[RMDB]
RNA sequence: GGGAACGACUCGAGUAGAGUCGAAAAGAUAUGGAACAUAGGGAGCUUACGAGGAUCUCGGAAACGAGAUCUCCCCACCGUAAGCGAAGAACUAUGUUCCUAAGUCAAAUCCGUGUUCGCACGGAAACACAUUGCACCAGUUCGCUGGUGCAAUGUGAAAAGAAACAACAACAACAAC
Reactivity to DMS in 0.01 (KOAc 150mM, MgCl2 10mM, bicine 150mM(pH8.5), 24C), signal-to-noise 2, nucleotides 027 to 126: g000a050u010a300u000g000g000a000a000c000a000u010a000g020g030g000a090g020c000u010u000a020c040g040a180g000g000a000u010c000u000c010g000g000a050a090a260c030g010a010g010a000u000c010u000c020c010c000c010a300c200c030g000u000a000a010g000c000g000a040a110g000a130a140c010u000a000u000g000u000u030c000c000u000a000a000g000u000c010a090a090a090u000c000c010g030u000g000u000u000c160g030c010a000c000g000g000a080a110a120
Reactivity to 2A3 in 0.01 (KOAc 150mM, MgCl2 10mM, bicine 150mM(pH8.5), 24C), signal-to-noise 1, nucleotides 027 to 126: g060a040u090a090u260g030g000a020a010c010a000u010a010g010g010g020a030g000c000u000u000a000c020g000a020g010g030a010u010c000u010c030g020g030a090a040a010c010g010a010g030a020u000c000u010c000c010c000c000a030c000c030g020u000a010a010g000c030g050a110a040g000a000a000c000u000a000u000g000u000u000c000c010u010a020a020g070u040c050a050a000a200u000c000c010g000u010g020u050u080c300g000c090a010c020g040g000a010a060a000